[RMDB]
RNA sequence: GGGAACGACUCGAGUAGAGUCGAAAAUAUGCUCCAGACGAUCGGUGCCUGUAAUGCUUUGCACAAACGUGUGGUGAGGACAGGCAUGUUUGGAUACAUGGCCGCCUCUUCCCCGGCGAGCACGAUCGUGGCUACCUAGCUUCGGCUAGGUAGCCACAAAAGAAACAACAACAACAAC
Reactivity to 2A3 in 0.01 (KOAc 150mM, MgCl2 10mM, bicine 150mM(pH8.5), 24C), signal-to-noise 2, nucleotides 027 to 126: u180a080u130g050c030u000c020c020a030g000a000c010g010a010u180c020g030g050u040g000c010c000u020g040u120a120a190u180g070c030u130u140u050g060c010a020c010a040a130a170c240g090u080g050u060g030g110u250g110a000g000g040a000c020a130g000g000c000a000u000g000u000u000u080g080g150a060u040a150c000a060u090g130g000c000c020g000c050c000u100c040u120u250c030c000c000c010g100g000c020g000a040g020c000a000c040g010a020u070c040

Chemical mapping of a 177-nucleotide RNA with 2A3. Conditions: 150 mM KOAc, 10 mM MgCl2 and 150 mM bicine (pH 8.5), 24 C. Values cover nucleotides 27 to 126. It was measured as part of the RMDB library OK1LIB.